[RMDB]
An RNA of 177 nucleotides, treated with DMS and 2A3 and read out base by base. Conditions: 150 mM KOAc, 10 mM MgCl2 and 150 mM bicine (pH 8.5), 24 C. DMS adducts were read by reverse transcription with MarathonRT.

RNA sequence: GGGAACGACUCGAGUAGAGUCGAAAAGGCAGAUCGGCAACCGCGCCGUCCAGCGAGGGAAGCAUCUGGCUAGUGGCCAGUCCUUCCGGCGUAAUAAUUUGCGGUUCAUCUUCGGCAUUCACCCGCAUGCACCUAACGUUUUCGAACGUUAGGUGCAAAAAGAAACAACAACAACAAC
Reactivity to DMS in 0.01 (KOAc 150mM, MgCl2 10mM, bicine 150mM(pH8.5), 24C), signal-to-noise 2, nucleotides 027 to 126: g000g010c030a020g000a070u000c160g000g000c070a070a050c090c070g010c030g000c120c050g000u000c050c040a090g010c100g050a080g000g010g000a030a070g000c210a010u050c000u000g000g020c000u080a040g000u040g000g020c000c000a020g000u000c300c000u000u000c000c000g000g020c000g000u000a200a220u040a050a060u020u090u000g010c050g010g000u010u000c090a190u070c040u000u000c050g000g010c020a160u010u000c030a110c010c000c020g040c130a050
Reactivity to 2A3 in 0.01 (KOAc 150mM, MgCl2 10mM, bicine 150mM(pH8.5), 24C), signal-to-noise 3, nucleotides 027 to 126: g130g000c040a020g040a040u040c030g070g060c060a020a030c000c010g010c020g020c010c020g010u030c010c010a020g030c030g060a050g000g090g000a060a000g070c010a060u110c020u000g010g000c000u060a080g230u150g190g000c000c000a000g000u030c000c000u000u000c000c000g030g000c010g010u010a000a080u180a070a080u060u110u210g020c000g000g000u010u060c000a050u000c040u090u030c010g000g010c020a020u080u070c010a050c000c000c010g000c050a040